[RMDB]
RNA sequence: GGGAACGACUCGAGUAGAGUCGAAAAGAUCCAGAUGCCACGCCGGGAGUGUGCCGCGCCAGUCGGCGGUAGCCGCAGUAAGGUCGUAGACCGUGAUCCCCCUUCCGCGGUCAUGGCAGCUGACCAGACCACAGGACUGGUUCGCCAGUCCUGUGGUAAAAGAAACAACAACAACAAC
Reactivity to 2A3 in 0.01 (KOAc 150mM, MgCl2 10mM, bicine 150mM(pH8.5), 24C), signal-to-noise 1, nucleotides 027 to 126: g060a020u050c010c010a050g030a130u080g000c000c000a020c000g050c050c020g060g070g000a060g060u120g050u060g050c000c010g010c020g030c000c020a030g040u110c060g090g010c030g020g040u040a040g040c020c020g000c020a020g090u140a160a050g040g020u040c030g050u030a000g000a000c010c010g060u000g030a050u070c010c000c000c000c060u000u180c000c010g050c020g030g040u020c020a000u050g000g010c060a000g000c000u000g000a060c010c000a040g020
Reactivity to DMS in 0.01 (KOAc 150mM, MgCl2 10mM, bicine 150mM(pH8.5), 24C), signal-to-noise 1, nucleotides 027 to 126: g000a110u020c130c020a050g000a050u000g020c000c060a120c230g000c050c020g000g030g000a060g020u050g000u040g000c060c010g000c090g050c100c050a140g020u000c030g000g000c000g000g000u000a090g000c010c040g060c050a060g020u010a070a080g000g020u000c000g020u000a080g010a000c000c000g000u020g000a110u020c060c020c000c020c040u010u040c050c040g010c070g000g030u030c060a090u010g000g000c000a090g030c070u000g000a110c020c000a100g020